[RMDB]
RNA sequence: GGGAACGACUCGAGUAGAGUCGAAAAGGAGGACGAAGCAUAUUUCUGUUUCUGGAGGAUUAUUUAUAAUCUGCCGAAAAGUCUUGCAGGUGGCUGGGAUAUGUUCAGUCUGGUAGAAUUAAGCACGAAAACGUGUCCUUGUUCGCAAGGACACGAACUUGUAUGACUUGUUCGCAAGUCAUACAAGAAAAGAAACAACAACAACAAC
Reactivity to 2A3 in 0.01 (KOAc 150mM, MgCl2 10mM, bicine 150mM(pH8.5), 24C), signal-to-noise 3, nucleotides 027 to 156: g070g040a030g000g030a010c020g030a070a000g010c030a010u020a030u030u060u040c050u050g050u000u040u010c020u050g010g030a030g010g010a010u010u030a040u020u220u050a070u060a110a110u030c040u110g080c030c020g040a030a070a020a030g010u010c050u060u050g060c020a020g010g060u070g030g000c010u020g000g000g000a010u010a020u080g090u120u060c080a020g000u010c020u010g010g030u080a020g060a060a030u180u100a120a040g010c040a040c100g090a050a020a040a040c000g000u000g000u000c000c000u010u010g020u060u060c120g010c140a000a000g000g040a030c000a000c000g000a000a000
Reactivity to DMS in 0.01 (KOAc 150mM, MgCl2 10mM, bicine 150mM(pH8.5), 24C), signal-to-noise 2, nucleotides 027 to 156: g010g000a190g000g000a060c040g000a140a130g000c010a080u010a050u000u010u000c040u000g010u000u000u000c020u000g040g010a050g000g000a010u000u010a060u010u000u000a080u000a110a010u010c020u000g010c010c010g010a030a040a090a100g020u000c050u030u000g020c030a110g010g000u000g020g010c030u000g000g010g000a050u000a010u010g000u000u000c040a200g020u000c010u000g010g020u010a080g020a040a100u000u000a060a120g020c070a060c060g000a100a040a080a090c030g010u000g000u000c000c000u000u000g000u000u010c300g040c040a030a030g010g010a000c000a000c010g000a010a030
Annotation
This 207-nucleotide RNA was probed chemically with 2A3 and DMS. Values cover nucleotides 27 to 156. High 2A3 reactivity points to a flexible backbone, as in loops and unpaired stretches. Conditions: 150 mM KOAc, 10 mM MgCl2 and 150 mM bicine (pH 8.5), 24 C.